[RMDB]
RNA sequence: GGGAACGACUCGAGUAGAGUCGAAAACACAAAUGGGAAUGCGGGGGAGCAGGGCCAGACAGGUUCUGCCAGGAGCGGAGCAGGGUUGCAGGCCCAGGACUCUGCUCAGAGCUUGGCGCAGCCGUCACACACAUAAACUAUUCGUAGUUUAUGUGUGAAAAGAAACAACAACAACAAC
Reactivity to 2A3 in 0.01 (KOAc 150mM, MgCl2 10mM, bicine 150mM(pH8.5), 24C), signal-to-noise 7, nucleotides 027 to 126: c090a010c030a030a090a120u180g020g010g040a140a100u110g010c050g020g020g000g000g010a060g020c030a010g010g010g010c020c020a060g060a140c060a060g010g000u040u010c020u040g010c010c000a030g020g070a010g010c030g010g000a010g000c010a020g000g040g020u040u150g120c070a060g060g090c020c010c000a010g040g000a030c000u000c000u010g000c000u010c010a010g010a000g010c020u040u040g040g000c030g000c040a010g020c020c020g070u090c000a010
Reactivity to DMS in 0.01 (KOAc 150mM, MgCl2 10mM, bicine 150mM(pH8.5), 24C), signal-to-noise 9, nucleotides 027 to 126: c100a140c170a070a080a080u010g000g010g000a100a070u000g010c070g010g010g000g010g010a130g010c050a040g010g000g010c040c050a110g010a060c170a080g020g010u000u000c030u010g010c020c060a070g000g000a040g010c030g010g000a020g010c010a070g000g000g010u000u000g020c110a100g010g010c020c010c010a120g010g010a040c000u000c000u000g000c020u000c010a040g010a060g010c040u000u000g000g000c040g010c150a040g010c030c020g010u010c080a240